The record gives the reactivity of an RNA of 177 nucleotides to DMS and 2A3. Conditions: 150 mM KOAc, 10 mM MgCl2 and 150 mM bicine (pH 8.5), 24 C. It was measured as part of the RMDB library TTRDES.

[RMDB]
RNA sequence: GGGAACGACUCGAGUAGAGUCGAAAAAAAGAUAUGGAGCGUGAACUACAUCCGAAACAGACUAUGAAGGUACGUCGGAAACGACGUACUGGAGUCUGAGAUAGCUGAUGCACGCUCCUAAGUCAAAGGAUACUGUUAGGUUCGCCUAACAGUAUCCAAAAGAAACAACAACAACAAC
Reactivity to DMS in 0.01 (KOAc 150mM, MgCl2 10mM, bicine 150mM(pH8.5), 24C), signal-to-noise 3, nucleotides 027 to 126: a080a090a060g000a000u000a160u020g000g010a010g020c000g030u000g010a070a030c070u030a300c020a010u000c010c090g000a240a130a110c010a020g000a000c010u010a210u020g020a090a120g020g000u000a000c010g020u000c000g000g000a040a030a060c010g020a010c000g020u000a010c000u000g000g000a000g000u010c010u010g000a030g010a110u010a190g000c210u000g000a020u000g030c020a010c000g010c020u000c000c000u000a000a050g000u000c030a120a070a130
Reactivity to 2A3 in 0.01 (KOAc 150mM, MgCl2 10mM, bicine 150mM(pH8.5), 24C), signal-to-noise 3, nucleotides 027 to 126: a000a000a040g030a000u030a000u060g010g000a000g020c000g030u000g020a070a030c070u210a060c300a010u010c030c030g050a060a060a010c010a010g000a000c010u100a300u300g030a010a010g010g020u000a000c000g020u000c010g020g000a030a000a020c000g000a000c000g000u000a000c000u000g000g000a010g000u000c000u000g000a040g030a060u250a040g090c210u140g020a000u000g030c010a000c010g010c000u000c000c000u000a000a010g020u000c040a000a080a140